[RMDB]
RNA sequence: GGGAACGACUCGAGUAGAGUCGAAAAUAAAUCUGUACUUAUUGCGUUAGAUCGUUUUGUAACUGCUACUAUUGAAGAAGCAGACCAAUAUAAAGGUACCAUUCAUUCAAAAGCAUUACAUCAUAACGCGUGAUGUAUCGUUCGCGAUACAUCACGCAAAAGAAACAACAACAACAAC
Reactivity to 2A3 in 0.01 (KOAc 150mM, MgCl2 10mM, bicine 150mM(pH8.5), 24C), signal-to-noise 3, nucleotides 027 to 126: u050a000a110a000u030c070u110g190u090a070c070u190u120a230u260u140g060c040g040u040u110a100g040a270u150c030g010u120u080u000u090g050u000a030a040c100u040g000c020u070a000c020u060a250u120u010g000a110a040g000a000a000g080c090a030g000a000c000c000a060a030u300a050u220a300a120a040g030g000u100a180c000c000a070u000u030c120a110u000u000c000a010a010a010a010g000c000a040u000u000a000c000a010u080c030a020u050a120a040c040

An RNA of 177 nucleotides, treated with 2A3 and read out base by base. Reactivities are given for positions 27 through 126. The RNA was probed in 150 mM KOAc, 10 mM MgCl2 and 150 mM bicine (pH 8.5) at 24 C.